[RMDB]
RNA sequence: GGGAACGACUCGAGUAGAGUCGAAAACGACGAUAGUUCGCUAUCGUCGCAAGGGCUGUUUUUCUCGCAGACUUUCAGCCCCAAACAAAAAAGUCAGCAAAAUAAUCGGUGGCUUCGGCCACCGAAAUAGUGUUCACAUAUUCGUAUGUGAACACUAAAAAGAAACAACAACAACAAC
Reactivity to DMS in 0.01 (KOAc 150mM, MgCl2 10mM, bicine 150mM(pH8.5), 24C), signal-to-noise 2, nucleotides 027 to 126: c020g010a010c010g000a020u000a000g010u000u010c260g020c000u010a000u000c000g030u000c000g030c110a100a100g000g010g010c010u000g020u000u000u000u000u000c060u000c180g010c010a060g020a010c000u000u000u000c010a010g000c000c000c010c150a010a010a280c040a010a000a000a020a000a020g010u000c000a040g030c010a100a030a090a090u010a110a130u000c000g000g010u000g000g010c000u000u010c160g020g000c000c000a010c000c010g000a000a020a050
Reactivity to 2A3 in 0.01 (KOAc 150mM, MgCl2 10mM, bicine 150mM(pH8.5), 24C), signal-to-noise 3, nucleotides 027 to 126: c010g000a000c010g010a000u000a010g020u030u060c180g010c120u000a000u000c000g000u010c000g000c010a080a150g010g000g000c000u010g010u000u000u010u000u000c070u070c100g000c000a020g020a010c000u010u010u010c010a000g000c010c000c020c100a010a020a020c020a010a010a020a000a000a000g020u040c010a000g000c010a000a070a040a050u160a030a090u040c000g000g000u000g010g000c030u040u070c280g080g000c020c000a000c000c010g010a000a000a000